[RMDB]
RNA sequence: GGGAACGACUCGAGUAGAGUCGAAAAGAUAUGGAGGUUUGUGGAGCGAAGAACAUAUGAGAACUCGGAAACGAGACAUAUGGGAGCUCCCAAACCUCCUAAGUCAAAACGCACGUUCGCGUGCGAAGAGAUACUCUUAGUUCGCUAAGAGUAUCUCAAAAGAAACAACAACAACAAC
Reactivity to 2A3 in 0.01 (KOAc 150mM, MgCl2 10mM, bicine 150mM(pH8.5), 24C), signal-to-noise 6, nucleotides 027 to 126: g010a000u020a020u100g000g000a010g020g100u030u010u020g180u300g050g000a000g000c020g060a290a060g020a130a020c010a000u020a000u010g120a180g100a300a200c010u010c010g000g010a030a020a020c010g000a000g050a050c010a000u000a010u000g000g000g010a060g010c000u000c000c000c000a000a000a000c000c000u010c000c000u000a000a000g000u000c000a000a000a010a040c010g010c000a000c000g010u060u070c280g010c010g120u000g010c000g010a070a020
Reactivity to DMS in 0.01 (KOAc 150mM, MgCl2 10mM, bicine 150mM(pH8.5), 24C), signal-to-noise 5, nucleotides 027 to 126: g010a020u000a290u010g010g000a030g010g000u000u000u000g010u020g010g000a010g020c010g000a080a170g010a140a170c010a010u000a000u000g010a300g010a090a140c010u000c000g010g000a060a080a130c000g010a020g030a140c010a000u000a000u000g000g010g000a060g010c000u000c000c000c000a000a010a010c000c000u000c000c000u000a010a040g000u000c030a080a070a110a180c020g000c000a010c010g020u000u000c210g010c000g030u000g010c000g000a080a050